Structure probing data (2A3) for a 177-nucleotide construct. Reactivities are given for positions 27 through 126. The reactions ran in a buffer of 150 mM KOAc, 10 mM MgCl2 and 150 mM bicine (pH 8.5), at 24 C.
RNA sequence: GGGAACGACUCGAGUAGAGUCGAAAAAGUGAAAGUGUUAUCGGAAUCCCAUCUGAAUCAAGCCUUAAGCCAAAUUAGGCAAAUACCACCAUUCAGUGGUAGUACCCAAGAACUCAUCAACCGACACUGCACCGCUCAUAUUCGUAUGAGCGGUGCAAAAAGAAACAACAACAACAAC
Reactivity to 2A3 in 0.01 (KOAc 150mM, MgCl2 10mM, bicine 150mM(pH8.5), 24C), signal-to-noise 1, nucleotides 027 to 126: a030g300u300g130a120a120a000g050u000g000u080u080a030u050c000g000g000a180a150u150c000c000c000a060u080c060u050g000a020a000u130c070a150a050g000c000c000u000u180a000a000g030c000c000a140a250a130u100u000a190g000g000c000a000a000a000u210a000c000c000a080c020c160a300u210u300c240a000g000u000g020g000u000a000g070u020a020c000c000c000a000a000g020a050a000c030u000c000a050u000c000a050a300c020c000g000a060c000a000c050